RNA sequence: GGGAACGACUCGAGUAGAGUCGAAAAAGUACACAGAUACAUUCUGCCUAUCAUACCUGUUUUAGUUUGGGUUUCCUAGAAUGGGGAUUCAGAGACAGUCAUUUGUAUGUAAGUACUGUAUUUGGAAAUACUAAAUCACCUUCGGGUGAUUUAGUAUAAAAGAAACAACAACAACAAC
Reactivity to 2A3 in 0.01 (KOAc 150mM, MgCl2 10mM, bicine 150mM(pH8.5), 24C), signal-to-noise 1, nucleotides 027 to 126: a000g120u110a070c110a010c020a070g020a020u060a000c010a020u090u000c000u050g020c000c010u070a070u190c020a020u010a070c020c000u010g120u020u030u000u100a150g040u020u140u070g030g000g010u000u070u010c000c010u050a150g140a280a170u160g000g000g020g040a020u000u030c030a000g010a000g030a070c000a000g000u130c030a110u020u140u150g010u030a040u010g020u050a010a070g020u020a030c050u050g000u000a090u020u000u020g000g030a100a180
Reactivity to DMS in 0.01 (KOAc 150mM, MgCl2 10mM, bicine 150mM(pH8.5), 24C), signal-to-noise 4, nucleotides 027 to 126: a040g020u010a030c050a240c070a100g010a030u010a030c040a050u010u010c080u010g020c020c010u010a120u000c070a050u000a080c020c020u000g000u010u000u010u000a070g020u000u010u010g010g010g010u000u000u000c060c000u000a100g010a080a050u000g010g020g000g000a090u000u000c090a040g000a040g000a000c020a020g000u010c240a100u010u000u000g010u000a010u000g020u010a090a090g010u010a030c050u010g000u000a060u010u010u000g010g000a120a050
The record gives the reactivity of an RNA of 177 nucleotides to 2A3 and DMS. The data come from the RNA Mapping Database (RMDB), library OK2TST. For DMS, 3,767 sequencing reads were counted.